Source information:
This 207-nucleotide RNA was probed chemically with DMS and 2A3. The 2A3 profile rests on 3,244 reads.

RNA sequence: GGGAACGACUCGAGUAGAGUCGAAAAUCCUAAGUCAGCGAGGGAGUCUUAUCAGAGCGUUGAUCGUAUCGGAAACGAUACGGGAGCUCUCUUAUGGACUUUGAUCUCGCUGAUAUGGAAAAAGUAAAGUCCAGUACUUCGGUACUGGACUUUACAACAUAAUACCGAUCUUCGGAUCGGUAUUAUGAAAAGAAACAACAACAACAAC
Reactivity to DMS in 0.01 (KOAc 150mM, MgCl2 10mM, bicine 150mM(pH8.5), 24C), signal-to-noise 3, nucleotides 027 to 156: u010c000c010u010a050a290g010u000c000a010g010c000g020a050g020g020g010a030g020u010c000u010u000a030u000c020a020g020a010g020c000g010u000u010g000a050u000c000g020u000a000u010c010g020g000a210a110a280c010g030a010u000a000c010g010g010g000a070g020c000u000c000u000c000u000u010a050u010g050g010a040c000u000u010u000g000a120u010c000u000c000g020c020u000g000a000u010a120u010g010g000a080a090a150a170a210g020u010a010a020a020g000u000c000c000a020g030u000a000c000u000u000c300g040g010u000a010c000u020g010g010a000c000u000u000u000a000c010a110a220
Reactivity to 2A3 in 0.01 (KOAc 150mM, MgCl2 10mM, bicine 150mM(pH8.5), 24C), signal-to-noise 3, nucleotides 027 to 156: u000c010c000u020a100a020g020u000c000a000g000c000g000a010g020g030g010a010g000u000c020u200u300a050u040c040a000g000a000g020c000g010u030u020g060a220u010c000g000u000a000u020c010g010g020a150a050a030c000g000a000u000a010c000g000g000g000a000g000c000u000c000u000c000u040u030a020u060g000g000a010c030u120u080u090g030a030u050c000u000c000g000c010u000g010a020u000a000u020g010g020a030a100a020a060a040g010u020a000a010a000g020u000c000c000a010g010u000a000c010u030u180c300g070g000u000a010c000u000g000g000a000c000u000u000u010a010c000a000a000